[RMDB]
RNA sequence: GGGAACGACUCGAGUAGAGUCGAAAAUUGACAGUGCGUAUAGUGGGUCGUUUAUAGUUGAGAAGGAUGGGCAGACUGUGCACAGCACGAAUAUUAACGUGCCUGCGGGUGGUACGUAUCAGUAUGGUCGUCACUCCCAAUUCGUUGGGAGUGACGAAAAAGAAACAACAACAACAAC
Reactivity to DMS in 0.01 (KOAc 150mM, MgCl2 10mM, bicine 150mM(pH8.5), 24C), signal-to-noise 1, nucleotides 027 to 126: u080u020g000a080c140a050g000u010g020c000g000u030a060u000a050g010u020g000g030g020u000c020g000u030u010u000a070u010a170g000u000u020g000a060g000a050a010g000g000a060u010g010g000g030c070a030g000a060c040u050g020u020g030c000a060c300a230g000c000a020c110g030a180a050u000a100u000u030a040a020c090g000u010g000c000c110u010g000c000g010g020g030u000g030g020u000a070c080g000u000a050u000c030a050g000u000a080u040g050g000
Reactivity to 2A3 in 0.01 (KOAc 150mM, MgCl2 10mM, bicine 150mM(pH8.5), 24C), signal-to-noise 2, nucleotides 027 to 126: u080u090g090a040c000a040g040u000g000c010g020u090a000u100a020g120u090g000g000g040u050c000g010u030u020u030a020u030a060g040u000u130g000a050g040a070a210g060g130a120u150g030g000g080c000a000g040a020c090u110g090u090g060c090a030c000a130g000c000a000c000g110a100a000u020a080u200u080a250a110c030g000u020g000c020c000u120g020c060g020g050g000u140g000g000u110a050c130g000u020a040u160c000a040g200u100a080u160g130g040